[RMDB]
RNA sequence: GGGAACGACUCGAGUAGAGUCGAAAAGGAUAACCAAAUGCCGGGAAUGAGCGGUAUUAAAGCAACCAAAUAUAUUCGUAAUCAUUUGAAAAUAAUGACGCCUAUUUAUGCGUAUACUGCUGAUGCGACAAUCAACGCUGUUCGCAGCGUUGAUUGUAAAAGAAACAACAACAACAAC
Reactivity to DMS in 0.01 (KOAc 150mM, MgCl2 10mM, bicine 150mM(pH8.5), 24C), signal-to-noise 2, nucleotides 027 to 126: g030g080a130u000a080a160c220c080a100a110a060u030g020c040c030g030g000g040a060a120u000g000a120g000c000g040g000u000a000u000u030a150a050a200g030c060a080a050c160c220a010a090a050u030a010u000a080u040u020c050g000u000a070a220u000c010a020u000u000u000g000a140a050a150a070u020a010a010u000g000a030c190g030c250c160u000a000u000u000u000a010u000g010c030g040u000a010u000a000c030u010g000c060u000g030a020u010g000c090g000
Reactivity to 2A3 in 0.01 (KOAc 150mM, MgCl2 10mM, bicine 150mM(pH8.5), 24C), signal-to-noise 3, nucleotides 027 to 126: g030g010a090u080a100a020c020c020a040a080a000u060g030c020c030g060g000g030a140a280u240g000a090g080c020g030g000u000a000u020u060a040a100a040g090c020a010a000c040c020a010a090a000u090a060u030a010u070u160c080g010u040a020a180u020c030a020u000u060u130g130a090a050a090a070u300a000a110u040g030a010c010g020c010c000u110a260u070u120u110a080u030g000c000g010u040a000u000a040c030u050g000c010u030g000a070u100g030c050g030

Background: An RNA of 177 nucleotides, treated with DMS and 2A3 and read out base by base. For DMS, 1,240 sequencing reads were counted. The reactions ran in a buffer of 150 mM KOAc, 10 mM MgCl2 and 150 mM bicine (pH 8.5), at 24 C. Values cover nucleotides 27 to 126. Values are in units of 0.01, from 0 to 300, in steps of 10. 2A3 adducts were read by reverse transcription with SuperScript II with manganese.